Chemical mapping of a 207-nucleotide RNA with DMS and 2A3. Reactivities are given for positions 27 through 156. Source: RMDB library M2RFPK, as collected in RNAgym.

RNA sequence: GGGAACGACUCGAGUAGAGUCGAAAAUUGCGCCUCCGAUUCGCCGUCGGCAUUUCCCCAGCAGCCAUGAUCUACCAGGCUGCGGUGCGGCUCGCCGCACAGGUCAUCCCUCAUCGGGCGCGUCCUGGAUAGGGCUAUACUUUCGAGUAUAGCCCAAGUUAUACGUGAUGUUCGCAUCACGUAUAACAAAAGAAACAACAACAACAAC
Reactivity to DMS in 0.01 (KOAc 150mM, MgCl2 10mM, bicine 150mM(pH8.5), 24C), signal-to-noise 2, nucleotides 027 to 156: u020u000g000c010g020c020c010u000c050c020g010a090u000u010c070g030c020c050g000u000c010g060g000c090a220u000u000u000c010c020c020c030a100g020c010a030g040c020c020a170u000g000a140u000c090u000a150c110c040a120g020g020c000u000g020c030g010g020u000g000c030g000g050c120u000c130g000c030c010g130c080a030c060a040g020g000u010c090a140u010c020c010c010u000c100a100u000c120g020g010g040c020g000c030g010u000c030c040u000g000g010a210u000a110g000g090g080c000u000a000u010a020c000u000u010u000c240g000a090g010u000a020u000a010g000c000c000c000a000a010
Reactivity to 2A3 in 0.01 (KOAc 150mM, MgCl2 10mM, bicine 150mM(pH8.5), 24C), signal-to-noise 3, nucleotides 027 to 156: u100u120g030c000g000c010c020u060c030c030g060a080u100u100c080g010c040c000g060u040c040g020g010c030a040u060u080u070c000c000c000c000a020g030c000a000g000c000c020a170u120g060a130u060c060u200a130c130c020a000g000g020c000u000g000c010g000g000u040g000c020g000g010c050u120c080g060c010c000g000c000a030c010a040g030g030u030c040a160u100c030c020c020u110c000a070u100c050g000g000g010c020g010c010g010u030c000c000u030g030g030a120u140a140g000g000g010c000u010a000u000a000c000u080u040u200c210g070a000g010u000a010u010a000g000c010c000c000a000a000